[RMDB]
RNA sequence: GGGAACGACUCGAGUAGAGUCGAAAAGUCUGUGCGUUUCCAUUUGAGUAUCCUGAAAACGGGCUUUUCAGCAUGGAACGUACAUAUUAAAUAGUAGGAGUGCAUAGUGGCCCGUAUAGGAGGCAUUGAGGCGAGGAUUGUUUCGACAAUCCUCGAAGGCUAAAUACACUUUCGAGUGUAUUUAGCCAAAAGAAACAACAACAACAAC
Reactivity to 2A3 in 0.01 (KOAc 150mM, MgCl2 10mM, bicine 150mM(pH8.5), 24C), signal-to-noise 4, nucleotides 027 to 156: g080u040c040u020g010u020g000c000g020u010u140u050c020c020a040u060u060u040g050a050g020u080a100u140c020c030u050g070a050a050a030a040c100g000g030g000c050u090u050u050u050c040a030g030c020a010u020g000g000a010a000c000g000u000a000c000a000u030a000u020u130a030a040a070u130a020g090u020a030g000g070a030g020u070g020c050a050u050a120g090u060g040g020c020c020c030g020u020a030u060a040g050g000a010g010g000c030a030u040u120g060a030g010g130c020g000a000g000g000a000u000u010g000u000u100u020c030g060a010c000a010a000u000c000c000u000c010g010a010a000
Reactivity to DMS in 0.01 (KOAc 150mM, MgCl2 10mM, bicine 150mM(pH8.5), 24C), signal-to-noise 2, nucleotides 027 to 156: g010u000c050u000g010u000g010c030g000u010u010u000c000c020a090u000u010u000g010a170g000u000a060u000c040c010u000g020a050a060a050a180c060g030g030g040c110u000u000u000u000c030a080g000c110a050u010g000g000a090a030c000g010u000a050c020a050u000a080u000u000a080a060a160u010a070g020u000a090g020g010a120g040u000g000c020a150u000a100g020u000g010g010c000c030c050g030u000a150u000a070g010g020a080g010g010c040a110u010u000g000a120g020g040c020g010a050g040g010a050u000u000g000u010u030u000c220g020a090c030a010a020u000c010c000u000c000g010a010a070